Notes: Chemical mapping of a 170-nucleotide RNA with DMS and 2A3.
[RMDB]
RNA sequence: GGGAACGACUCGAGUAGAGUCGAAAAAGAGGACCCCUUCAGCGAACAGAAGAGCUCCCUCCUCCGGAGAGAGAAGACCAUAGCGAUAGGGGGAGAUGCUAGGAGUAGGAGGCGACCGAAGCGAGGGACAUGGGGUGUUUCGACACCCCAAAAAGAAACAACAACAACAAC
Reactivity to DMS in 0.01 (KOAc 150mM, MgCl2 10mM, bicine 150mM(pH8.5), 24C), signal-to-noise 5, nucleotides 027 to 129: a060g020a090g040g010a100c190c040c030c020u090u070c100a140g010c020g010a030a070c120a080g020a050a050g020a080g000c050u040c050c040c010u000c010c030u030c120c030g000g020a120g010a070g010a090g000a040a030g020a040c050c080a080u060a000g030c070g020a100u010a060g040g030g010g030g020a050g000a050u010g000c100u020a030g000g000a050g030u030a070g020g020a040g000g030c210g040a030c000c040g000a080a040g000c150g000a020g020g020g010a040c250a130
Reactivity to 2A3 in 0.01 (KOAc 150mM, MgCl2 10mM, bicine 150mM(pH8.5), 24C), signal-to-noise 3, nucleotides 027 to 129: a000g080a060g030g050a090c000c000c000c000u020u060c080a040g020c030g040a030a000c010a080g090a060a010g010a020g010c010u000c040c010c000u040c000c020u030c040c040g040g000a030g000a000g000a020g000a070a060g020a020c030c010a070u060a040g050c030g100a060u150a160g020g000g000g020g000a000g030a000u040g010c070u020a000g030g000a030g010u090a050g020g000a000g000g000c000g020a000c010c000g020a030a000g000c030g000a000g000g000g000a030c050a060
Background:
Conditions: 150 mM KOAc, 10 mM MgCl2 and 150 mM bicine (pH 8.5), 24 C. Values cover nucleotides 27 to 129. Reactivities are rounded to 0.1 and cut off at 0 and 3. It was measured as part of the RMDB library 15KLIB.